Structure probing data (DMS and 2A3) for a 207-nucleotide construct. The data come from the RNA Mapping Database (RMDB), library OK3TST. Conditions: 150 mM KOAc, 10 mM MgCl2 and 150 mM bicine (pH 8.5), 24 C. For DMS, 2,640 sequencing reads were counted. Values are in units of 0.01, from 0 to 300, in steps of 10.
RNA sequence: GGGAACGACUCGAGUAGAGUCGAAAAAUCACUGGAUCCAUCUACUGUUUUCCAUCACCUUCCCCACUGAUGCUCUGGGCGAGAGAGUGAUGUGUCACUUCAACUGUGUGUAAUAUGUCAGACACGUCCUACAAUAACAGGCGUCAUAUUUGUAUUAAGCAUAAAAUACCUUCGGGUAUUUUAUGCUAAAAGAAACAACAACAACAAC
Reactivity to DMS in 0.01 (KOAc 150mM, MgCl2 10mM, bicine 150mM(pH8.5), 24C), signal-to-noise 1, nucleotides 027 to 156: a070u020c030a080c130u000g010g000a140u000c060c040a050u000c020u020a060c080u000g000u030u000u000u000c020c020a100u010c000a030c140c010u010u010c020c000c020c070a070c250u000g000a100u000g020c030u010c040u020g030g010g000c070g020a130g010a120g020a100g050u000g000a000u020g030u000g000u000c030a100c180u000u000c050a070a100c050u010g020u000g000u000g010u000a090a070u000a080u000g040u000c000a180g010a110c020a070c010g010u000c000c020u010a070c020a040a080u000a090a060c090a100g050g060c010g020u000c020a090u000a110u010u000u010g000u000a120u000u010a130
Reactivity to 2A3 in 0.01 (KOAc 150mM, MgCl2 10mM, bicine 150mM(pH8.5), 24C), signal-to-noise 3, nucleotides 027 to 156: a000u100c020a010c040u030g000g010a030u040c010c000a050u110c080u170a130c070u070g080u100u100u100u040c040c020a070u040c000a040c000c010u030u000c000c020c020c010a030c040u060g000a050u100g010c050u070c040u120g040g030g060c160g000a100g000a000g000a020g110u120g010a010u040g070u040g000u000c020a020c080u110u020c100a140a120c110u120g010u030g020u030g050u190a100a050u100a100u170g090u090c080a090g020a070c000a000c020g020u000c000c000u060a050c040a080a150u130a120a060c030a060g000g090c010g000u000c000a030u100a110u140u040u110g030u000a040u020u030a140